[RMDB]
Structure probing data (DMS) for a 177-nucleotide construct. Conditions: 150 mM KOAc, 10 mM MgCl2 and 150 mM bicine (pH 8.5), 24 C. Values are in units of 0.01, from 0 to 300, in steps of 10. In probing experiments dimethyl sulfate is read out at A N1 and C N3, which are open when not base-paired.
RNA sequence: GGGAACGACUCGAGUAGAGUCGAAAAGAAGUGUGGGAGCAGGUGGGCUGGGCAGUGGCAGAAAACCUCAUGACACAAUCUCUCCGCCUCCCUGUGUUGGUGGAGGAUGUCUGCAGCAGCAUUUAAAAAUCCAUACCGGUUUCGACCGGUAUGGAUUAAAAGAAACAACAACAACAAC
Reactivity to DMS in 0.01 (KOAc 150mM, MgCl2 10mM, bicine 150mM(pH8.5), 24C), signal-to-noise 1, nucleotides 027 to 126: g000a110a130g010u000g030u000g000g010g010a170g030c140a070g010g040u000g000g000g010c140u020g010g000g000c100a000g000u000g000g040c020a030g000a060a020a070a110c090c020u000c050a130u000g010a090c030a040c070a070a090u000c020u000c020u000c010c010g030c000c000u000c040c020c140u000g020u010g010u000u000g000g010u000g000g000a010g020g010a030u000g000u000c030u010g020c040a020g000c080a070g000c100a100u010u010u000a000a040a110